[RMDB]
RNA sequence: GGGAACGACUCGAGUAGAGUCGAAAAGCUCUAGGAGACUAGAGCAAUACGUACGAGCGAUCGUGUCACUGAACUCAGAUGGCCAGUUCAGAGGCUGUCAAAGGACAUAGCUAUAGCUAUGUCCAAAGACCAUUCAUAGGUUCGCCUAUGAAUGGUCAAAAGAAACAACAACAACAAC
Reactivity to 2A3 in 0.01 (KOAc 150mM, MgCl2 10mM, bicine 150mM(pH8.5), 24C), signal-to-noise 4, nucleotides 027 to 126: g000c000u000c000u000a010g030g020a090g050a060c000u000a000g000a000g000c000a000a010u060a020c030g060u050a020c040g050a030g060c030g030a030u030c050g050u060g040u090c020a020c100u050g060a050a020c010u020c040a020g030a130u040g020g020c020c010a020g000u060u040c020a020g020a020g080g000c010u010g010u060c010a040a060a050g000g000a000c000a010u000a000g010c010u140a050u070a280g000c000u000a000u020g000u000c000c000a000a000a000
Reactivity to DMS in 0.01 (KOAc 150mM, MgCl2 10mM, bicine 150mM(pH8.5), 24C), signal-to-noise 3, nucleotides 027 to 126: g020c010u000c000u010a010g000g030a240g010a160c000u000a000g000a010g010c010a100a000u040a080c110g020u000a050c020g020a030g000c220g000a190u000c040g010u000g000u000c010a120c040u010g000a050a010c000u010c100a050g010a050u010g000g010c020c100a020g010u010u000c070a040g000a050g000g000c000u010g010u000c040a080a060a110g010g000a000c000a000u000a000g000c000u010a190u040a100g000c010u000a010u020g010u000c000c000a010a020a060
Source: RMDB library OK1LIB, as collected in RNAgym. This 177-nucleotide RNA was probed chemically with 2A3 and DMS. The RNA was probed in 150 mM KOAc, 10 mM MgCl2 and 150 mM bicine (pH 8.5) at 24 C. High 2A3 reactivity points to a flexible backbone, as in loops and unpaired stretches. The 2A3 profile rests on 5,543 reads.